Chemical mapping of a 177-nucleotide RNA with DMS and 2A3. For 2A3 the reverse transcriptase was SuperScript II with manganese. The data come from the RNA Mapping Database (RMDB), libraries RFM100 and RFMREP.
RNA sequence: GGGAACGACUCGAGUAGAGUCGAAAAGUGUUUGCGGGCGUGGCAUCAUCAAGAUUCACAUCCAUGCAUAUAUCACAAGACGCACAUAUACAUCCGAUUUGGCUGAGAAUCUUGAUGAUGCUGCAUCGGUGCAAGUUAAGUUCGCUUAACUUGCACCAAAAGAAACAACAACAACAAC
Reactivity to DMS in 0.01 (KOAc 150mM, MgCl2 10mM, bicine 150mM(pH8.5), 24C), signal-to-noise 2, nucleotides 027 to 126: g020u000g000u000u000u010g010c100g010g010g020c130g010u010g010g000c020a000u000c000a000u000c010a010a000g010a020u000u010c000a070c010a020u000c000c000a030u010g010c120a100u010a050u010a040u000c030a080c120a110a110g000a130c160g000c120a130c170a080u040a070u010a070c100a060u020c090c090g000a120u000u000u000g020g000c090u000g000a090g020a010a010u010c000u000u000g000a010u000g000a010u000g000c000u000g000c000a020u000c070
Reactivity to 2A3 in 0.01 (KOAc 150mM, MgCl2 10mM, bicine 150mM(pH8.5), 24C), signal-to-noise 7, nucleotides 027 to 126: g060u040g060u090u060u100g110c050g020g030g000c050g010u020g010g000c000a000u000c000a000u000c000a000a000g000a000u000u010c010a010c010a070u010c010c010a010u070g040c090a050u120a030u050a020u200c070a030c040a180a070g090a080c060g050c090a040c030a080u140a020u050a060c070a110u070c100c060g070a100u050u030u090g020g000c010u000g020a020g000a110a000u000c000u000u000g000a010u000g000a000u010g010c000u000g000c000a000u010c020
The reactions ran in a buffer of 150 mM KOAc, 10 mM MgCl2 and 150 mM bicine (pH 8.5), at 24 C. For DMS the reverse transcriptase was MarathonRT.